[RMDB]
RNA sequence: GGGAACGACUCGAGUAGAGUCGAAAAUCCACUGGUUUCGACCAGUGGAAAAAACCUUUGUGUGUCACCAGCAACAGCAUGCCGACAGCCCAUUGGGCUGGGCAUGACAUGCUGUGUGACACACUCUGGUAAACUGCCAUACCUUCGGGUAUGGCAGAGGGCUAAGUGAUUUCGAUCACUUAGCCCUAAAAGAAACAACAACAACAAC
Reactivity to 2A3 in 0.01 (KOAc 150mM, MgCl2 10mM, bicine 150mM(pH8.5), 24C), signal-to-noise 2, nucleotides 027 to 156: u000c000c000a000c000u000g000g010u080u060u080c290g110a020c000c000a010g000u000g000g000a070a000a000a000a000a070c010c020u010u000u010g000u000g000u000g000u000c000a000c000c000a010g010c000a020a050c040a200g030c010a000u000g010c020c040g220a190c000a000g000c040c000c060a280u150u300g050g000g000c000u030g000g000g020c000a000u000g050a080c020a030u020g000c000u000g070u020g010u000g060a000c000a000c000a000c000u000c000u020g000g000u060a150a000a000c000u020g000c000c000a000u000a000c000c000u080u090c300g100g000g000u020a000u000g000g000c000a000g000
Background
This 207-nucleotide RNA was probed chemically with 2A3. For 2A3 the reverse transcriptase was SuperScript II with manganese. The 2A3 profile rests on 1,121 reads. The reactions ran in a buffer of 150 mM KOAc, 10 mM MgCl2 and 150 mM bicine (pH 8.5), at 24 C.